[RMDB]
RNA sequence: GGGAACGACUCGAGUAGAGUCGAAAAAAAGAUAUGGACUCCAUUGUCAGAAGGGGUCUAGAGGAAAUCGGAAACGAUUUCUACCCACCUAGACUUACUUCUUGGAUUUAUGGAGUCCUAAGUCAAACUUCUUAUUUAACUUCGGUUAAAUAAGAAGAAAAGAAACAACAACAACAAC
Reactivity to 2A3 in 0.01 (KOAc 150mM, MgCl2 10mM, bicine 150mM(pH8.5), 24C), signal-to-noise 2, nucleotides 027 to 126: a010a000a020g080a050u130a080u170g000g010a000c010u020c020c010a010u000u040g020u020c040a050g000a000a010g030g020g000g030u010c000u010a010g020a030g040g000a020a000a020u000c010g020g020a000a010a100c000g010a000u000u010u040c000u030a050c070c040c020a040c010c000u000a000g000a010c000u010u240a240c000u080u190c010u140u280g130g000a040u280u300u190a010u040g000g010a000g000u030c000c000u000a000a000g000u000c000a000a110a140
Reactivity to DMS in 0.01 (KOAc 150mM, MgCl2 10mM, bicine 150mM(pH8.5), 24C), signal-to-noise 2, nucleotides 027 to 126: a060a070a160g000a030u010a300u010g010g000a020c000u000c000c000a020u000u000g010u000c010a030g020a030a020g010g000g010g000u000c010u000a000g000a140g000g000a000a000a000u000c000g020g010a120a120a210c000g000a010u000u010u000c000u000a050c080c060c120a300c200c000u000a010g000a010c000u010u000a120c000u000u000c010u000u010g000g000a030u000u010u010a000u000g020g000a010g020u010c000c000u000a000a060g010u000c020a140a120a270

Overview: An RNA of 177 nucleotides, treated with 2A3 and DMS and read out base by base. Source: RMDB library TTRDES, as collected in RNAgym. For DMS the reverse transcriptase was MarathonRT. Conditions: 150 mM KOAc, 10 mM MgCl2 and 150 mM bicine (pH 8.5), 24 C. For 2A3 the reverse transcriptase was SuperScript II with manganese.